[RMDB]
RNA sequence: GGGAACGACUCGAGUAGAGUCGAAAAGAUAAGCUAGCAGCAAAAAGGAACCGAUUCCCUCCAAGUUCGGAAAGAGAUACCGGGCGAGGCGCUGAAGAAAGAAUCUCGCUUCAGACACCCCAAGGACAUGACCUUAAAAUGUUCGCAUUUUAAGGAAGUUAUCCUUUGUCUUCGGACAAAGGAUAACAAAAGAAACAACAACAACAAC
Reactivity to DMS in 0.01 (KOAc 150mM, MgCl2 10mM, bicine 150mM(pH8.5), 24C), signal-to-noise 1, nucleotides 027 to 156: g010a120u000a070a110g020c030u020a050g000c070a110g020c060a050a080a150a070a110g030g000a110a140c030c060g020a140u000u000c010c000c000u000c040c010a160a270g000u000u000c040g010g000a030a050a070g000a070g000a160u000a050c020c000g040g020g020c030g010a120g000g030c080g010c010u010g010a060a060g020a070a060a030g000a190a140u000c030u000c070g000c050u000u010c040a090g000a300c020a060c010c000c000c030a040a190g000g000a110c060a090u010g010a090c050c000u020u000a000a000a050a000u010g020u010u000c220g040c030a010u000u000u010u000a000a020g040g000a000a110
Reactivity to 2A3 in 0.01 (KOAc 150mM, MgCl2 10mM, bicine 150mM(pH8.5), 24C), signal-to-noise 2, nucleotides 027 to 156: g010a060u150a030a060g010c030u030a010g010c020a000g000c020a010a040a070a090a030g100g000a070a030c070c050g020a050u070u040c000c000c000u000c010c010a060a030g000u040u040c030g020g050a080a090a010g080a070g010a030u070a120c010c010g010g000g020c020g020a030g000g010c060g000c040u070g000a060a040g040a040a190a040g040a080a120u030c040u010c120g010c000u000u040c000a010g030a040c000a070c020c040c010c030a010a020g040g010a000c010a080u070g060a060c010c000u000u010a000a010a000a000u000g000u050u010c120g030c100a000u000u010u000u000a010a000g000g010a010a020

An RNA of 207 nucleotides, treated with DMS and 2A3 and read out base by base. DMS adducts were read by reverse transcription with MarathonRT. For 2A3 the reverse transcriptase was SuperScript II with manganese. The RNA was probed in 150 mM KOAc, 10 mM MgCl2 and 150 mM bicine (pH 8.5) at 24 C. It was measured as part of the RMDB library M2RFPK.